[RMDB]
RNA sequence: GGGAACGACUCGAGUAGAGUCGAAAAUCGGGCUUCGGCCCGAAAAUGAUAUGAUGAGGUGUACUGAGCAUGAUGAAGUGUAGCUCAAUGUAAGUACUCUAAAGUCCAAAACUUCGCUUCGGCGAAGCGGCUAUUACAUGUUCGCAUGUAAUAGCCGAAAAGAAACAACAACAACAAC
Reactivity to 2A3 in 0.01 (KOAc 150mM, MgCl2 10mM, bicine 150mM(pH8.5), 24C), signal-to-noise 2, nucleotides 027 to 126: u000c000g010g000g000c020u080u060c270g140g010c020c010c010g000a020a000a000a000u070g010a010u050a050u130g090a030u110g020a030g070g020u040g000u020a010c030u050g040a040g080c000a020u110g020a090u120g090a270a060g080u090g070u270a030g020c010u000c000a000a000u040g020u040a030a040g010u000a010c000u000c000u050a110a090a000g010u050c020c020a030a040a030a060c000u000u000c010g010c000u030u050c140g090g000c010g010a010a000g010
Reactivity to DMS in 0.01 (KOAc 150mM, MgCl2 10mM, bicine 150mM(pH8.5), 24C), signal-to-noise 2, nucleotides 027 to 126: u000c000g000g010g010c000u000u000c190g030g010c000c010c010g000a000a020a110a100u020g000a100u020a090u020g000a060u000g000a270g000g000u000g000u010a010c030u000g000a100g000c020a060u010g050a090u010g010a070a100g030u010g000u000a090g000c020u000c030a080a060u000g010u000a170a090g000u010a040c020u000c010u000a030a080a130g010u000c030c180a060a110a070a160c030u010u000c000g000c000u000u010c190g040g000c000g010a000a000g000
Notes
The record gives the reactivity of an RNA of 177 nucleotides to 2A3 and DMS. For DMS the reverse transcriptase was MarathonRT. The data come from the RNA Mapping Database (RMDB), library RFMREP. Reactivities are given for positions 27 through 126. The reactions ran in a buffer of 150 mM KOAc, 10 mM MgCl2 and 150 mM bicine (pH 8.5), at 24 C. For DMS, 1,813 sequencing reads were counted.